[RMDB]
RNA sequence: GGGAACGACUCGAGUAGAGUCGAAAAGAUAUGGACCUUUGGUAGUCCAACAGCAUUCUCGGAAACGAGAAUGACAUGGACGCCACUGAGGUCCUAAGUCAAAUCUGUUAAGUUCGCUUAACAGAAAUCAUUGGAAUACGUUCGCGUAUUCCAAUGAAAAAGAAACAACAACAACAAC
Reactivity to 2A3 in 0.01 (KOAc 150mM, MgCl2 10mM, bicine 150mM(pH8.5), 24C), signal-to-noise 2, nucleotides 027 to 126: g040a000u100a060u220g000g000a000c000c000u030u040u020g190g000u120a300g010u010c000c000a000a020c030a000g030c000a000u000u020c000u020c010g060g040a130a140a070c030g020a030g050a010a000u010g000a010c010a030u040g000g000a010c010g010c010c010a090c190u200g050a040g020g000u000c000c010u000a060a020g020u020c030a020a050a190u060c010u000g000u000u020a000a020g020u040u120c300g010c170u030u000a020a000c000a010g010a080a030a030
Reactivity to DMS in 0.01 (KOAc 150mM, MgCl2 10mM, bicine 150mM(pH8.5), 24C), signal-to-noise 3, nucleotides 027 to 126: g010a060u010a300u020g020g000a000c010c000u020u000u000g020g030u000a140g020u000c000c000a030a120c300a220g000c000a010u000u000c010u000c010g010g010a110a120a210c010g010a020g020a030a020u000g010a040c110a280u000g000g000a010c010g000c000c000a070c300u020g010a010g000g010u020c010c000u000a030a120g010u010c050a090a100a160u000c000u000g000u000u000a020a020g030u000u020c300g020c000u000u020a000a000c000a010g000a020a070a090